[RMDB]
RNA sequence: GGGAACGACUCGAGUAGAGUCGAAAAGAAUACCAAACCUUGUGAAGAUGAGCGUUGGGAAAGGAGUAGGAAGGUCCCAAUUUGGAAUUUUGACAUCCUAAAAGCCUUGGGUGCCGCAGAAUGAGUAACGCUUACUAGGGUUCGCCCUAGUAAGCGUAAAAGAAACAACAACAACAAC
Reactivity to DMS in 0.01 (KOAc 150mM, MgCl2 10mM, bicine 150mM(pH8.5), 24C), signal-to-noise 1, nucleotides 027 to 126: g010a210a110u020a190c030c030a020a110a100c080c050u000u000g050u000g000a090a050g010a030u000g010a060g010c100g000u040u000g030g040g030a080a060a120g030g010a110g000u010a070g000g010a080a100g010g010u000c010c010c030a030a100u000u020u040g030g020a100a090u000u000u010u010g020a070c100a080u000c010c010u000a030a070a020a090g000c070c040u010u000g000g010g010u000g050c010c030g070c100a060g000a050a030u010g010a090g030u000a070

The record gives the reactivity of an RNA of 177 nucleotides to DMS. The reactions ran in a buffer of 150 mM KOAc, 10 mM MgCl2 and 150 mM bicine (pH 8.5), at 24 C. For DMS the reverse transcriptase was MarathonRT. Reactivities are given for positions 27 through 126.